[RMDB]
RNA sequence: GGGAACGACUCGAGUAGAGUCGAAAAUCGGCGACGACCGCGACCUCGCUGGUGAUGAGAUGAUUCACACGAUGGACGUCGACGGCGAGACGAUAUUCAUGCCGGGCGAGACACAUGACCAGUUGAUUGAGGUCCUCAAGGAACAGGACGAACUCGCUCGAUAAUGACAUUUCGAUGUCAUUAUCGAAAAAGAAACAACAACAACAAC
Reactivity to DMS in 0.01 (KOAc 150mM, MgCl2 10mM, bicine 150mM(pH8.5), 24C), signal-to-noise 3, nucleotides 027 to 156: u000c010g000g010c040g000a200c030g000a080c030c050g000c040g020a080c030c030u010c030g000c040u000g020g010u000g000a080u000g020a190g010a230u010g010a210u000u000c020a090c050a110c070g030a120u000g020g000a080c070g030u000c000g030a170c020g000g000c020g020a120g020a290c030g010a110u000a060u000u000c020a090u010g010c070c000g010g000g020c000g010a090g010a090c060a090c040a090u000g030a100c000c010a120g020u000u000g000a140u000u000g010a120g000g000u000c020c030u000c030a080a090g000g000a060a090c070a100g000g020a090c030g000a050a220c020u000c010g020c300
Reactivity to 2A3 in 0.01 (KOAc 150mM, MgCl2 10mM, bicine 150mM(pH8.5), 24C), signal-to-noise 5, nucleotides 027 to 156: u070c030g000g000c030g040a140c030g080a120c080c050g020c040g050a050c010c020u000c040g030c110u090g060g050u050g050a070u070g030a060g040a080u230g050a100u100u050c020a030c020a030c090g110a130u110g080g000a040c020g020u010c020g020a150c010g000g000c010g020a020g020a030c040g040a040u030a110u130u110c050a040u170g030c050c020g010g020g020c010g010a030g010a010c010a000c000a090u080g030a040c000c020a020g030u050u060g210a240u080u160g030a040g000g050u010c000c010u050c030a070a120g120g000a080a060c050a050g030g010a030c060g010a030a080c020u010c040g000c010